[RMDB]
RNA sequence: GGGAACGACUCGAGUAGAGUCGAAAAAGGACGCGCCGGCGGCGUUUCGUUUAGCGCGAACCUCGGUCUUGGGGCCGGCCAGAUCCUUGGAGCUGACAAGCGUGCCGCGACGUACUACGAAGCCGGCGUUAGAGAAGCAUUUCGAUGCUUCUCUAACAAAAGAAACAACAACAACAAC
Reactivity to 2A3 in 0.01 (KOAc 150mM, MgCl2 10mM, bicine 150mM(pH8.5), 24C), signal-to-noise 4, nucleotides 027 to 126: a000g080g020a030c030g020c010g010c050c060g010g010c020g040g020c020g000u000u010u050c020g010u030u080u230a060g000c020g000c030g030a090a100c010c010u020c010g050g030u020c050u090u190g070g000g070g020c000c000g000g030c010c000a020g000a080u080c010c010u020u060g030g010a060g020c010u040g050a050c040a100a020g030c000g040u060g030c040c000g020c010g020a080c010g020u050a080c050u030a030c080g050a030a000g040c000c020g020g000c020
Reactivity to DMS in 0.01 (KOAc 150mM, MgCl2 10mM, bicine 150mM(pH8.5), 24C), signal-to-noise 7, nucleotides 027 to 126: a070g010g010a090c110g010c070g010c020c010g010g010c010g010g020c050g010u000u000u010c060g020u000u000u010a150g020c040g030c060g010a080a100c070c040u000c080g010g010u000c040u000u000g020g010g000g010c040c040g010g010c040c030a040g000a040u000c020c040u000u000g010g010a110g030c010u000g000a080c190a090a070g000c040g020u010g010c080c030g020c050g010a040c030g010u000a050c150u010a070c060g000a050a080g000c020c010g010g000c030
The record gives the reactivity of an RNA of 177 nucleotides to 2A3 and DMS. It was measured as part of the RMDB library OK2TRN. The reactions ran in a buffer of 150 mM KOAc, 10 mM MgCl2 and 150 mM bicine (pH 8.5), at 24 C. Reactivities are given for positions 27 through 126. High DMS reactivity at an A or C suggests that its Watson-Crick edge is free. The DMS profile rests on 13,080 reads.